The record gives the reactivity of an RNA of 177 nucleotides to DMS and 2A3. In probing experiments dimethyl sulfate is read out at A N1 and C N3, which are open when not base-paired.
RNA sequence: GGGAACGACUCGAGUAGAGUCGAAAAUUGGUUGGCGCUAACGCCCGUCGGGCUGUUUUGGCGCUGUUCAGGCUGAGUGUUGUGGUCCGGCCGUUCGCGGUCAGACAAUGAAGGGCCGUCGCGGCGACAUACUGAACUGCUUCGGCAGUUCAGUAUGAAAAGAAACAACAACAACAAC
Reactivity to DMS in 0.01 (KOAc 150mM, MgCl2 10mM, bicine 150mM(pH8.5), 24C), signal-to-noise 3, nucleotides 027 to 126: u030u020g010g010u020u020g000g000c020g000c030u000a030a040c070g000c000c010c020g040u030c200g000g010g000c010u040g020u010u000u030u020g030g010c000g020c000u000g010u020u020c050a040g000g000c040u000g000a130g020u020g000u010u000g010u000g000g000u020c070c090g000g010c000c010g010u020u010c130g000c020g000g010u020c000a030g010a090c150a110a080u040g000a070a130g000g000g010c030c010g000u000c240g020c040g000g010c010g000a280
Reactivity to 2A3 in 0.01 (KOAc 150mM, MgCl2 10mM, bicine 150mM(pH8.5), 24C), signal-to-noise 2, nucleotides 027 to 126: u080u020g120g030u020u150g060g000c000g020c010u030a000a040c020g010c010c000c010g190u210c060g010g000g000c070u180g070u090u090u140u190g010g000c000g000c000u010g010u010u030c010a010g070g000c050u110g030a050g130u080g020u070u000g010u020g060g010u060c070c000g050g000c020c000g020u030u080c130g000c010g020g010u020c000a020g040a160c080a070a090u200g080a100a100g070g020g000c010c000g010u040c030g000c010g020g000c000g010a000
For 2A3, 1,627 sequencing reads were counted. For 2A3 the reverse transcriptase was SuperScript II with manganese.